[RMDB]
RNA sequence: GGGAACGACUCGAGUAGAGUCGAAAACCUGACACGUUCGCGUGUCAGGAAACGUCGCUCCGAGAAUUACGCUGGCGUCGCGACGGACGCGACGCUAGCGUAAAACGCCCGACUUCGGUCGGGCGAACAUAGAUUGAUCGUUCGCGAUCAAUCUAUGAAAAGAAACAACAACAACAAC
Reactivity to 2A3 in 0.01 (KOAc 150mM, MgCl2 10mM, bicine 150mM(pH8.5), 24C), signal-to-noise 1, nucleotides 027 to 126: c010c000u010g020a000c000a010c010g040u080u080c260g010c020g130u000g020u010c000a010g020g050a060a100a010c090g070u070c040g050c000u000c000c020g100a070g070a140a180u090u040a010c010g020c020u010g000g030c000g000u030c000g000c000g040a110c070g110g200a100c030g010c020g010a060c000g020c000u000a000g010c000g000u000a000a000a020a000c010g000c020c000c000g000a000c000u030u020c120g090g020u010c000g020g000g010c000g000a010a000
Reactivity to DMS in 0.01 (KOAc 150mM, MgCl2 10mM, bicine 150mM(pH8.5), 24C), signal-to-noise 2, nucleotides 027 to 126: c000c000u020g000a020c000a000c000g010u000u010c210g030c010g050u000g010u000c000a000g000g000a020a050a070c120g020u000c040g010c030u000c000c010g000a120g000a140a140u000u000a000c000g010c000u020g000g000c010g020u000c050g050c000g030a260c280g020g000a180c020g020c010g010a030c020g030c010u000a000g010c020g020u000a000a050a150a290c000g000c010c000c000g000a020c000u000u000c090g020g020u010c000g010g000g000c000g010a000a030

Notes: An RNA of 177 nucleotides, treated with 2A3 and DMS and read out base by base. DMS adducts were read by reverse transcription with MarathonRT.